Conditions: 150 mM KOAc, 10 mM MgCl2 and 150 mM bicine (pH 8.5), 24 C. Structure probing data (2A3) for a 207-nucleotide construct. The 2A3 profile rests on 737 reads. Values cover nucleotides 27 to 156. It was measured as part of the RMDB library M2RFPK.
RNA sequence: GGGAACGACUCGAGUAGAGUCGAAAAGAGCUUUUGUCCGGAAUGGUUCCGCCGUGAUCGGGCCAUGCAAUAGUUGCCAACGACAACUAUGCUACGGUUGCUCAGGCAGCGUAACGCUGCUUGAAAGAUGACGGCAAUCGCUUCGGCGAUUGCCGAACUGUAGUUUCUGGUUCGCCAGAAACUACAGAAAAGAAACAACAACAACAAC
Reactivity to 2A3 in 0.01 (KOAc 150mM, MgCl2 10mM, bicine 150mM(pH8.5), 24C), signal-to-noise 2, nucleotides 027 to 156: g060a010g000c060u050u140u240u280g090u090c020c040g050g000a030a040u110g030g040u280u200c010c020g030c030c030g160u240g060a160u100c010g000g000g000c000c040a030u040g000c010a020a300u000a020g000u000u000g000c010c110a200a060c100g040a040c020a000a000c010u010a020u020g010c000u010a030c050g030g020u070u060g040c030u010c010a010g010g000c000a020g000c020g100u150a110a110c210g000c000u000g000c000u000u010g020a030a040a000g110a070u230g080a020c060g000g000c000a000a000u000c000g010c000u050u030c160g080g000c000g010a010u000u010g010c010c000g020a010a000
As a SHAPE reagent, 2A3 marks flexible, mostly unpaired nucleotides at the ribose 2'-OH.